Annotation:
An RNA of 177 nucleotides, treated with DMS and 2A3 and read out base by base. The data come from the RNA Mapping Database (RMDB), library TTRDES. For 2A3, 2,133 sequencing reads were counted. Reactivities are given for positions 27 through 126. The reactions ran in a buffer of 150 mM KOAc, 10 mM MgCl2 and 150 mM bicine (pH 8.5), at 24 C.
RNA sequence: GGGAACGACUCGAGUAGAGUCGAAAAAAAGAUAUGGAGUCAGAACUACUGCCACUCAGCGUUGAAAUUCAUUCGGAAACGAAUGAAUGGAGCUGUUACAAAGGUGGCAGCUGACUCCUAAGUCAAACAUACCGACAUGGUUCGCCAUGUCGGUAUGAAAAGAAACAACAACAACAAC
Reactivity to DMS in 0.01 (KOAc 150mM, MgCl2 10mM, bicine 150mM(pH8.5), 24C), signal-to-noise 2, nucleotides 027 to 126: a060a060a060g030a060u000a300u040g000g000a070g000u000c000a030g010a030a040c110u040a300c010u000g010c000c000a000c000u000c000a010g000c000g020u000u010g020a140a080a050u010u000c000a010u000u000c000g000g000a090a020a110c010g040a000a010u000g000a000a000u000g000g000a050g020c010u000g000u020u000a140c300a080a120a140g030g020u000g000g010c000a000g000c020u000g000a000c000u010c000c000u000a000a060g010u000c020a080a110a240
Reactivity to 2A3 in 0.01 (KOAc 150mM, MgCl2 10mM, bicine 150mM(pH8.5), 24C), signal-to-noise 1, nucleotides 027 to 126: a000a000a010g050a020u010a020u060g010g000a000g020u010c030a000g040a110a060c140u300a040c030u300g000c000c000a000c030u180c010a000g000c000g240u300u080g020a010a000a000u020u010c010a020u030u000c020g000g000a040a000a000c020g000a000a000u000g000a010a000u010g000g000a030g020c000u000g100u210u110a120c080a060a250a000g190g000u000g010g030c000a000g000c000u000g000a000c000u020c020c010u000a000a000g020u000c020a010a080a020